An RNA of 207 nucleotides, treated with 2A3 and DMS and read out base by base. For 2A3 the reverse transcriptase was SuperScript II with manganese. For DMS the reverse transcriptase was MarathonRT. Values cover nucleotides 27 to 156. Conditions: 150 mM KOAc, 10 mM MgCl2 and 150 mM bicine (pH 8.5), 24 C. For DMS, 1,714 sequencing reads were counted. For 2A3, 1,055 sequencing reads were counted.
RNA sequence: GGGAACGACUCGAGUAGAGUCGAAAAGAAUUGGUAUGUAAGCUACUUCUUCCAGUAGCUGCGUCAUAACAUCAAGGUUAUUCAUACUGAGCCGAAGCUCAGCUUCGGUCCUCCAAGGAAGACCAAAUACAGCUCAGCCCGUUCGCGGGCUGAGCAAUCGUAGACAUUGGUUCGCCAAUGUCUACGAAAAAGAAACAACAACAACAAC
Reactivity to 2A3 in 0.01 (KOAc 150mM, MgCl2 10mM, bicine 150mM(pH8.5), 24C), signal-to-noise 2, nucleotides 027 to 156: g070a000a120u010u040g000g000u020a020u000g000u040a030a000g000c000u000a000c020u090u170c000u000u010c010c000a010g000u020a000g010c000u000g010c030g110u070c020a020u020a000a010c010a050u270c170a100a080g180g000u000u000a030u070u000c000a000u010a020c010u020g010a000g010c010c000g000a000a000g000c020u050c300a050g000c020u010u000c000g000g020u000c010c000u070c010c030a010a060g000g000a010a020g020a010c040c100a030a100a040u270a110c050a030g000c010u000c000a000g000c040c020c020g030u030u050c120g020c020g030g000g030c010u000g000a000g000c000a000a000
Reactivity to DMS in 0.01 (KOAc 150mM, MgCl2 10mM, bicine 150mM(pH8.5), 24C), signal-to-noise 1, nucleotides 027 to 156: g030a110a140u000u010g050g000u000a020u000g020u030a100a110g030c000u000a020c000u000u010c110u000u000c160c120a130g040u000a010g000c020u000g020c100g000u000c030a060u000a070a070c010a030u000c110a090a170g040g020u000u000a090u000u010c020a140u010a160c020u020g000a090g000c000c000g000a030a100g000c000u020c160a170g000c020u000u000c000g030g000u000c000c030u000c030c090a090a270g030g000a050a160g000a090c020c000a030a100a130u000a060c080a120g110c030u000c000a000g010c000c010c030g020u000u020c300g040c050g100g000g020c030u000g010a010g030c010a000a000